[RMDB]
This 207-nucleotide RNA was probed chemically with 2A3. The 2A3 profile rests on 569 reads. Reactivities are given for positions 27 through 156. Conditions: 150 mM KOAc, 10 mM MgCl2 and 150 mM bicine (pH 8.5), 24 C.
RNA sequence: GGGAACGACUCGAGUAGAGUCGAAAAGUCAUGCCUUCGGGCAUGACAGGUACCGAGAGGUACCCCAUAGCGUACAGCAGACUCAGACUGUACGCUAAGUAAGUGUGUGUUCAAUAAGGUCUAAUUGAACACACACUCCGUUGGACCAAGAGUGUGACUACCCAUAGCAGUUCGCUGCUAUGGGUAGAAAAGAAACAACAACAACAAC
Reactivity to 2A3 in 0.01 (KOAc 150mM, MgCl2 10mM, bicine 150mM(pH8.5), 24C), signal-to-noise 1, nucleotides 027 to 156: g000u000c000a010u000g000c000c000u080u140c300g050g020g000c020a000u020g000a000c000a000g010g000u020a000c000c000g070a050g000a060g000g000u000a000c000c000c020c040a000u060a000g000c000g000u000a000c000a000g070c010a040g030a280c140u140c200a030g080a300c040u040g000u000a000c000g000c000u000a000a070g120u080a000a100g000u030g030u000g000u000g040u020u000c020a020a020u060a180a110g110g130u150c100u220a060a050u020u000g000a000a000c000a000c000a000c010a000c000u000c020c010g070u090u100g020g020a090c070c060a020a120g070a010g030u140g090u020g010a020